[RMDB]
RNA sequence: GGGAACGACUCGAGUAGAGUCGAAAAGAUAUGGAUAUUAAUUGAUGUAUGGCAAGGCAUGCGUAGCAUUCGGAAACGAAUGCUACGCCGCUGCUGAUGACCCAUAUUGAUCGAAGUAUCCUAAGUCCUCAUCUGACUAGUUCGCUAGUCAGAUGAGAAAAGAAACAACAACAACAAC
Reactivity to DMS in 0.01 (KOAc 150mM, MgCl2 10mM, bicine 150mM(pH8.5), 24C), signal-to-noise 2, nucleotides 027 to 126: g000a160u000a300u000g000g000a020u000a010u000u000a070a300u010u000g000a110u020g000u020a000u000g000g000c010a080a040g000g010c010a010u000g000c000g010u000a000g020c000a000u000u000c010g000g000a130a060a280c010g000a000a000u000g010c000u000a000c020g000c000c000g000c000u000g000c000u000g010a090u040g000a080c300c000c010a000u000a020u000u000g010a160u000c000g000a210a080g010u000a030u010c000c000u010a120a180g010u000c060
Reactivity to 2A3 in 0.01 (KOAc 150mM, MgCl2 10mM, bicine 150mM(pH8.5), 24C), signal-to-noise 1, nucleotides 027 to 126: g080a020u180a090u200g020g000a010u020a030u130u280a300a200u080u070g000a010u010g020u030a010u030g000g000c070a150a270g040g080c000a020u170g000c040g030u000a020g030c000a000u010u000c020g010g030a000a130a060c020g000a000a010u010g000c000u020a010c010g000c000c000g020c000u020g010c000u010g160a200u110g010a010c000c030c000a020u040a000u050u140g110a050u050c020g050a050a010g040u020a000u000c000c050u030a270a020g140u070c000